[RMDB]
RNA sequence: GGGAACGACUCGAGUAGAGUCGAAAAGCCAUAUACCCUGUCAGGUCAAAUUCAACAAUUGCUAGGGGUGGCAACAACAAUACAGGCUUCCUGACACCGGAGUCAGUCAAUGGAGACACUCCAUCGAAUCCACUCAGGCCAAUUGCUGAUGACACCACGCGUGAAAGGUUUUCGAACCUUUCACGCGAAAAGAAACAACAACAACAAC
Reactivity to 2A3 in 0.01 (KOAc 150mM, MgCl2 10mM, bicine 150mM(pH8.5), 24C), signal-to-noise 1, nucleotides 027 to 156: g050c010c000a010u050a000u140a210c020c000c070u100g100u130c080a060g010g010u070c070a090a170a120u110u040c010a060a090c010a000a060u050u040g000c050u130a080g020g080g030g000u020g040g060c070a060a010c000a030a020c010a070a060u230a080c060a070g010g020c050u100u030c060c000u090g080a050c000a000c050c000g030g020a010g010u030c090a020g060u040c000a000a070u000g120g000a010g030a160c110a060c150u000c000c000a000u030c050g050a020a010u010c050c000a010c040u000c040a020g040g040c060c070a010a000u030u010g000c010u070g000a000u010g000a010c000a000c060c010a010